An RNA of 207 nucleotides, treated with 2A3 and DMS and read out base by base. Reactivities are rounded to 0.1 and cut off at 0 and 3. Values cover nucleotides 27 to 156. For DMS, 4,692 sequencing reads were counted. DMS adducts were read by reverse transcription with MarathonRT. High DMS reactivity at an A or C suggests that its Watson-Crick edge is free. For 2A3 the reverse transcriptase was SuperScript II with manganese. The RNA was probed in 150 mM KOAc, 10 mM MgCl2 and 150 mM bicine (pH 8.5) at 24 C.

[RMDB]
RNA sequence: GGGAACGACUCGAGUAGAGUCGAAAAGUCGAACCCAGGGGGAGUGUGAUCCAGGUACCGCCGUAGAAACUGGAUUACGACGUCUACCCGGGAUUCAAACCCGGUCCCCCUCAGAGGUGACUCUGAGUGAAAGGUCUGCGCUAAGCGCACUGAUGAGCGAUAUAUCUUGGUUCGCCAAGAUAUAUCGAAAAGAAACAACAACAACAAC
Reactivity to 2A3 in 0.01 (KOAc 150mM, MgCl2 10mM, bicine 150mM(pH8.5), 24C), signal-to-noise 5, nucleotides 027 to 156: g050u030c010g010a020a010c020c040c110a120g030g020g010g000g000a030g020u030g010u010g000a000u000c000c000a010g060g020u100a110c050c060g140c060c080g060u090a060g140a080a250a000c010u000g000g030a010u010u010a020c090g060a020c020g220u030c030u140a300c000c020c000g010g010g000a040u110u090c070a080a070a160c000c010c000g000g030u030c010c000c000c000c000u000c000a000g000a010g000g030u090g060a040c010u000c000u000g000a000g030u110g070a090a060a020g040g010u070c080u090g000c010g000c070u180a210a090g000c020g000c030a030c050u090g100a150u100g070a060g080
Reactivity to DMS in 0.01 (KOAc 150mM, MgCl2 10mM, bicine 150mM(pH8.5), 24C), signal-to-noise 2, nucleotides 027 to 156: g010u020c080g000a060a280c030c010c010a070g010g000g030g050g000a180g000u020g030u000g030a050u000c000c000a080g000g000u000a110c090c060g020c060c270g000u000a140g020a100a110a250c020u000g030g000a120u010u000a020c010g020a050c040g000u000c030u000a130c030c010c000g040g020g010a040u000u000c060a100a090a100c000c010c010g000g010u000c000c010c000c020c000u000c010a020g000a070g000g000u000g010a300c010u010c020u000g000a060g000u010g000a140a150a270g020g010u000c060u010g010c020g000c000u000a070a150g010c060g020c010a050c030u000g020a120u010g010a220g020